Conditions: 150 mM KOAc, 10 mM MgCl2 and 150 mM bicine (pH 8.5), 24 C. The record gives the reactivity of an RNA of 177 nucleotides to DMS and 2A3.

[RMDB]
RNA sequence: GGGAACGACUCGAGUAGAGUCGAAAAGAAUGUAAGCGCGUAAUCGCGCCUUGACGUGAGUGAGACAAGACAGAAAGCUAUCCAAAGUAAGAUAGCAUAGCUCACAAUACGCUGAUCUGUCGUAGAACAGUCGUGGAGUAUUCGUACUCCACGACUGAAAAGAAACAACAACAACAAC
Reactivity to DMS in 0.01 (KOAc 150mM, MgCl2 10mM, bicine 150mM(pH8.5), 24C), signal-to-noise 2, nucleotides 027 to 126: g010a170a020u050g010u000a020a120g010c020g000c000g050u000a150a100u020c030g070c010g020c050c010u000u000g020a100c060g000u000g000a080g050u000g000a030g010a170c150a050a140g060a020c110a060g000a070a090a150g000c000u000a000u010c000c100a110a150a250g000u040a140a140g000a000u000a000g000c000a040u000a090g020c010u000c010a050c020a080a150u030a070c090g000c060u000g000a060u020c030u000g040u010c020g050u020a130g010a190a220
Reactivity to 2A3 in 0.01 (KOAc 150mM, MgCl2 10mM, bicine 150mM(pH8.5), 24C), signal-to-noise 3, nucleotides 027 to 126: g180a020a130u270g010u300a030a010g000c070g000c020g050u140a000a110u300c060g000c000g030c000c030u040u020g010a000c050g020u020g030a050g000u040g010a040g020a100c160a260a040g000a010c020a070g040a070a090a000g000c000u000a010u030c000c060a100a030a010g150u050a050a160g240a000u000a000g000c000a000u010a010g000c000u000c030a000c010a010a070u170a080c040g150c170u060g020a090u050c010u040g050u020c000g010u080a040g010a160a020
Source: RMDB library OK1LIB, as collected in RNAgym. For DMS the reverse transcriptase was MarathonRT. 2A3 adducts were read by reverse transcription with SuperScript II with manganese.